[RMDB]
RNA sequence: GGGAACGACUCGAGUAGAGUCGAAAACGGCAGCACGGAGGCCUGGAGGCUGGAGCCGUCUACAUCUGCACGGAAGACGCCUUCCCGCACAAGCGCCUGCAGCAGCUCAUGGCCCAGCAGCCGCGGCCUCCUUUCCGGCAUUCGUGCCGGAAAGGAGAAAAGAAACAACAACAACAAC
Reactivity to DMS in 0.01 (KOAc 150mM, MgCl2 10mM, bicine 150mM(pH8.5), 24C), signal-to-noise 1, nucleotides 027 to 126: c030g000g000c040a020g020c080a040c180g010g000a040g010g040c000c010u000g000g010a060g000g020c000u000g000g010a140g010c000c000g030u000c070u000a090c240a070u000c050u010g000c010a060c240g000g010a060a030g010a250c180g020c010c020u000u000c010c030c040g010c080a040c170a100a110g010c110g000c090c010u000g010c070a040g050c040a050g000c090u000c080a050u040g030g010c000c000c010a000g000c040a040g000c000c000g000c090g000g010c000